[RMDB]
RNA sequence: GGGAACGACUCGAGUAGAGUCGAAAAGAUAUGGAGUGGUGACAUGCUCCGCCAUCGGAAACGAUGGGUGAGCAACAGCACACUCCUAAGUCAAACACAACCCUAAACUUCGGUUUAGGGUUGUGAACAACAAAAAUACGUUCGCGUAUUUUUGUUGAAAAGAAACAACAACAACAAC
Reactivity to DMS in 0.01 (KOAc 150mM, MgCl2 10mM, bicine 150mM(pH8.5), 24C), signal-to-noise 6, nucleotides 027 to 126: g000a040u000a300u000g010g000a030g030u000g010g010u010g010a070c120a250u000g010c010u000c000c140g000c000c000a000u000c000g000g000a110a090a190c000g010a000u000g010g000g010u000g000a020g000c000a020a050c180a170g000c020a040c000a020c000u000c000c000u010a020a060g010u000c030a110a130a250c010a010c000a000a000c000c000c000u010a000a000a010c000u000u010c180g010g000u000u000u000a000g000g000g000u000u000g000u000g000a050a160
Reactivity to 2A3 in 0.01 (KOAc 150mM, MgCl2 10mM, bicine 150mM(pH8.5), 24C), signal-to-noise 3, nucleotides 027 to 126: g030a020u060a060u170g000g020a000g010u110g110g150u070g080a090c040a090u050g020c000u020c000c000g180c020c000a000u010c000g030g010a140a040a040c020g010a000u020g010g000g050u090g010a000g000c010a010a150c020a100g000c040a000c000a000c080u020c000c000u010a060a040g010u000c020a060a120a040c010a000c000a010a010c000c000c000u020a020a010a000c010u060u100c300g130g020u000u000u010a010g000g000g010u000u000g000u010g000a010a010